[RMDB]
RNA sequence: GGGAACGACUCGAGUAGAGUCGAAAAUAUUUAAGAGUUUACUGGGGAAGGGCUCGCUGGGCAUAAUCUAUGGCAUUCUAAUGGGCAGCUCUCUGAGUCUGUGGUUGAUCUAGAGGCCUAAACAUCCCUUAGUCACCUAGUUCGCUAGGUGACUAAGAAAAGAAACAACAACAACAAC
Reactivity to DMS in 0.01 (KOAc 150mM, MgCl2 10mM, bicine 150mM(pH8.5), 24C), signal-to-noise 2, nucleotides 027 to 126: u020a080u020u000u000a060a180g010a110g010u010u000u010a100c050u010g010g010g000g000a070a090g000g000g000c070u010c090g020c070u000g020g000g010c060a040u000a070a090u000c110u000a110u000g020g030c050a090u000u000c080u000a080a080u000g010g010g000c020a070g000c010u000c020u010c130u010g010a070g010u010c010u010g030u000g010g010u010u000g000a050u010c100u000a030g000a060g010g020c020c030u000a040a030a090c190a120u000c030c040
This 177-nucleotide RNA was probed chemically with DMS. For DMS the reverse transcriptase was MarathonRT. Source: RMDB library OK2TST, as collected in RNAgym.